[RMDB]
RNA sequence: GGGAACGACUCGAGUAGAGUCGAAAAGGCCGAAUGGUCCGACCUGGCAUGCGUCAGCUUUAGACAUUUGAAAAUGUUCGAAUUUGUUAUAUUCGCGUUCGAUGUGAACCAACGAAUUGACACGAGCGACUAUAUGGUACAGAUCGUCAAGUGUGCCACUUAUGAGUCAGUUCGCUGACUCAUAAGUAAAAGAAACAACAACAACAAC
Reactivity to DMS in 0.01 (KOAc 150mM, MgCl2 10mM, bicine 150mM(pH8.5), 24C), signal-to-noise 4, nucleotides 027 to 156: g030g020c020c010g000a070a110u010g020g020u000c030c000g020a080c030c000u000g010g020c020a090u000g010c100g010u000c040a160g020c070u000u000u000a120g020a050c030a070u000u000u000g010a140a110a150a110u000g020u000u000c030g010a040a110u000u000u000g010u000u000a060u000a030u000u000c000g010c040g010u000u000c020g010a240u010g040u000g020a020a020c000c010a070a040c010g010a020a020u010u000g000a050c020a050c100g000a100g020c020g010a100c040u000a070u000a080u000g030g020u000a130c020a070g010a050u000c050g020u000c040a070a120g040u000g010u000g020c000c030
Reactivity to 2A3 in 0.01 (KOAc 150mM, MgCl2 10mM, bicine 150mM(pH8.5), 24C), signal-to-noise 9, nucleotides 027 to 156: g020g000c020c020g100a150a170u290g020g000u040c020c030g000a020c000c000u000g010g010c020a010u030g020c000g000u010c030a050g010c020u110u100u070a050g000a020c010a050u030u030u180g110a100a100a050a050u110g030u040u020c030g060a160a130u100u080u030g030u020u040a140u020a010u160u010c010g000c050g060u000u010c050g070a290u190g140u200g140a010a010c000c010a040a020c010g010a020a020u030u020g000a010c010a010c060g020a030g010c000g030a020c030u090a040u060a060u300g090g000u100a040c010a020g040a070u070c080g040u010c040a040a050g030u010g000u010g030c000c000

Conditions: 150 mM KOAc, 10 mM MgCl2 and 150 mM bicine (pH 8.5), 24 C. This 207-nucleotide RNA was probed chemically with DMS and 2A3. The data come from the RNA Mapping Database (RMDB), library OK3TST. 2A3 adducts were read by reverse transcription with SuperScript II with manganese. The DMS profile rests on 9,767 reads. For 2A3, 6,675 sequencing reads were counted.